[RMDB]
RNA sequence: GGGAACGACUCGAGUAGAGUCGAAAAUACGCCUGAUGGCGAACGUGCGCAAGAUAAGAAUGGUCGUAUAAAAAGACACCGCAAUCGAUCAGACGGAAGAGCGCACGCGCGGUGUCUUAACACCAGACACGGUAAUAUUAUUCGUAAUAUUACCGUGAAAAGAAACAACAACAACAAC
Reactivity to 2A3 in 0.01 (KOAc 150mM, MgCl2 10mM, bicine 150mM(pH8.5), 24C), signal-to-noise 9, nucleotides 027 to 126: u140a010c020g020c010c020u260g150a200u300g030g020c020g020a040a020c010g000u020g000c000g000c030a100a070g040a270u180a140a060g080a120a070u040g010g010u020c040g010u090a040u130a160a130a030a000a000g000a000c000a000c000c000g000c030a030a100u100c020g030a020u050c010a020g080a110c070g120g070a080a020g040a040g070c000g000c000a000c000g000c010g000c000g000g000u000g000u000c000u000u030a020a010c030a020c020c030a010g030a060
Reactivity to DMS in 0.01 (KOAc 150mM, MgCl2 10mM, bicine 150mM(pH8.5), 24C), signal-to-noise 8, nucleotides 027 to 126: u040a130c030g010c010c010u020g020a150u050g020g010c020g020a080a120c050g010u000g000c000g010c010a170a130g010a130u040a090a100g010a100a120u000g010g010u000c050g000u010a120u060a050a070a070a040a020g010a020c020a010c010c000g010c010a130a080u010c040g010a050u020c050a030g010a130c090g010g010a090a080g010a100g000c000g000c010a000c000g010c280g010c010g020g000u000g000u000c010u000u000a040a070c130a080c020c020a080g010a300